An RNA of 177 nucleotides, treated with 2A3 and DMS and read out base by base. Reactivities are given for positions 27 through 126. The DMS profile rests on 5,351 reads. Source: RMDB library OK1LIB, as collected in RNAgym. The 2A3 profile rests on 3,889 reads. For DMS the reverse transcriptase was MarathonRT.
[RMDB]
RNA sequence: GGGAACGACUCGAGUAGAGUCGAAAAGAGCUAAUAUCUACUUCGUUUGUGCAUAUCACUAUAGGGAAGCUGAUGGGUUGCGAGAAAUCGCAGUGCCUAGUGGAAUGCGUUCAAGCAACGGCUCGAAGGGUAAAGAAUUCUUCGGAAUUCUUUACCCAAAAGAAACAACAACAACAAC
Reactivity to 2A3 in 0.01 (KOAc 150mM, MgCl2 10mM, bicine 150mM(pH8.5), 24C), signal-to-noise 5, nucleotides 027 to 126: g020a010g020c040u070a100a040u060a160u190c060u050a080c040u090u130c060g190u010u020u060g020u030g010c020a010u070a060u150c010a000c030u060a050u140a130g100g040g020a100a040g060c070u040g020a080u060g060g090g030u010u010g000c020g010a020g040a010a070a030u080c010g000c000a000g030u070g120c000c010u010a030g000u030g030g050a040a020u000g000c000g020u040u070c000a010a000g000c000a000a040c040g020g000c000u010c010g010a090a030
Reactivity to DMS in 0.01 (KOAc 150mM, MgCl2 10mM, bicine 150mM(pH8.5), 24C), signal-to-noise 3, nucleotides 027 to 126: g000a000g000c030u010a130a060u030a070u000c030u000a150c100u020u020c090g010u010u000u010g030u040g020c160a100u010a070u010c020a020c010u000a060u030a120g010g040g000a040a050g010c040u010g020a080u020g000g000g020u000u000g000c000g000a120g020a070a090a030u020c020g010c000a010g020u040g010c010c010u000a030g000u040g010g010a120a010u010g000c010g000u010u010c040a020a170g000c010a060a040c100g010g000c000u010c000g000a090a090